The data come from the RNA Mapping Database (RMDB), library RNAMAK. The record gives the reactivity of an RNA of 207 nucleotides to 2A3 and DMS. The RNA was probed in 150 mM KOAc, 10 mM MgCl2 and 150 mM bicine (pH 8.5) at 24 C. For DMS the reverse transcriptase was MarathonRT.

[RMDB]
RNA sequence: GGGAACGACUCGAGUAGAGUCGAAAAGCGGAGUUCGCUCCGCAAGCGUCCUAAGUCACUGCACCUGACGGGAGUACGAUAAGUAUCGGAAACGAUACUUUUGACGUACGAAGAACGUCAGGGAUAGUGAUAUGGAAUACCCGGCCUUCGGGCCGAAACGUCACUUACUAUUCGUAGUAAGUGACGUAAAAGAAACAACAACAACAAC
Reactivity to 2A3 in 0.01 (KOAc 150mM, MgCl2 10mM, bicine 150mM(pH8.5), 24C), signal-to-noise 5, nucleotides 027 to 156: g000c000g000g020a010g010u080u160c180g100c120u010c010c000g000c000a020a010g110c050g060u010c000c000u030a120a030g010u000c000a000c000u020g020c180a030c040c000u000g000a000c000g000g010g010a060g000u000a000c010g010a040u010a070a000g000u000a000u000c000g020g030a080a050a040c010g010a000u000a000c000u030u010u010u060g120a060c000g000u000a000c000g010a050a020g020a030a010c010g000u000c000a010g010g000g000a010u060a010g000u000g000a000u010a030u070g000g010a020a020u070a120c030c010c000g000g020c020c010u080u160c250g050g010g010c010c030g010a060a150
Reactivity to DMS in 0.01 (KOAc 150mM, MgCl2 10mM, bicine 150mM(pH8.5), 24C), signal-to-noise 3, nucleotides 027 to 156: g010c000g020g010a030g050u000u010c300g070c000u020c030c010g000c020a020a020g020c050g010u030c010c000u000a100a300g000u000c010a020c010u000g030c300a300c000c010u000g010a030c010g000g010g020a280g020u010a020c000g030a120u000a020a010g000u000a000u000c000g000g020a200a150a290c020g000a020u000a010c000u000u000u000u000g000a280c110g020u000a020c000g000a090a160g000a090a100c000g020u000c000a000g000g010g010a070u000a010g010u000g000a020u000a280u000g040g010a090a120u010a050c030c040c000g000g020c010c010u000u000c260g060g010g020c000c010g010a010a060